[RMDB]
RNA sequence: GGGAACGACUCGAGUAGAGUCGAAAACUUGGGCACUUCGGUGCCCAAGAAACGCUCAACCUCACAGCGCAAAAGUCGAACGAAUACAGUUCGACAUGAGGAAAACGGACCCGUUCGCGGGUCCGAACGGUAAUUUCAAGUUCGCUUGAAAUUACCGAAAAGAAACAACAACAACAAC
Reactivity to 2A3 in 0.01 (KOAc 150mM, MgCl2 10mM, bicine 150mM(pH8.5), 24C), signal-to-noise 2, nucleotides 027 to 126: c000u000u000g010g000g000c000a000c020u020u050c240g090g000u000g020c000c000c000a010a000g000a000a000a000c010g030c000u030c040a050a100c010c000u010c010a020c010a060g050c020g000c130a230a190a050a050g000u000c000g000a000a010c000g050a090a080u300a220c120a060g000u020u000c000g010a000c000a000u020g000a010g000g000a000a020a040a040c000g000g000a000c000c010c000g040u050u070c300g010c020g070g000g000u020c000c000g000a000a010
Reactivity to DMS in 0.01 (KOAc 150mM, MgCl2 10mM, bicine 150mM(pH8.5), 24C), signal-to-noise 1, nucleotides 027 to 126: c000u000u000g000g000g020c000a000c010u010u020c160g040g130u020g020c000c020c010a000a000g010a160a120a160c010g030c000u000c070a140a110c050c000u010c000a040c300a010g010c020g050c060a170a070a010a050g020u000c000g000a050a030c010g000a090a170u020a060c240a090g000u000u000c000g030a000c000a030u000g000a000g000g000a070a020a120a190c020g000g010a000c000c020c000g040u000u030c120g050c000g030g010g000u000c000c010g010a000a000

This 177-nucleotide RNA was probed chemically with 2A3 and DMS. Values are in units of 0.01, from 0 to 300, in steps of 10. The DMS profile rests on 879 reads.